Record summary
This 177-nucleotide RNA was probed chemically with 2A3 and DMS. The data come from the RNA Mapping Database (RMDB), library 15KREP. 2A3 adducts were read by reverse transcription with SuperScript II with manganese. The RNA was probed in 150 mM KOAc, 10 mM MgCl2 and 150 mM bicine (pH 8.5) at 24 C.
[RMDB]
RNA sequence: GGGAACGACUCGAGUAGAGUCGAAAAAAUAAACUUCGCGUUGUAAUUCCUGACUUCACCGUCUGGAAUCAGGUAGUCACAUAUCCCUCGCUUAACUACGCUGGGGCUUUGUGGGACAUUACAGUUACCAAAGAAUAACGUUCGCGUUAUUCUUUGGAAAAGAAACAACAACAACAAC
Reactivity to 2A3 in 0.01 (KOAc 150mM, MgCl2 10mM, bicine 150mM(pH8.5), 24C), signal-to-noise 1, nucleotides 027 to 126: a000a040u200a000a060a030c010u100u060c120g020c050g150u080u010g060u040a000a080u040u010c030c000u010g020a010c020u000u050c050a060c090c020g060u050c060u090g020g020a010a010u040c000a000g030g070u040a010g070u010c000a000c010a050u030a010u010c010c000c010u000c020g000c000u150u180a190a070c100u120a060c140g000c020u000g000g000g010g000c000u000u080u010g010u010g010g010g020a020c010a050u060u050a010c010a040g070u110u080a040
Reactivity to DMS in 0.01 (KOAc 150mM, MgCl2 10mM, bicine 150mM(pH8.5), 24C), signal-to-noise 3, nucleotides 027 to 126: a100a080u020a090a050a080c100u000u000c070g020c150g000u010u010g020u000a030a050u000u000c000c000u000g000a010c030u000u010c240a070c230c290g000u000c100u000g020g000a010a010u000c060a070g000g010u000a050g010u000c010a020c020a030u000a090u000c010c000c010u000c300g010c000u000u010a110a130c230u010a060c250g000c070u000g000g020g000g030c260u000u000u010g010u000g000g000g000a040c080a080u010u000a040c070a080g010u000u020a180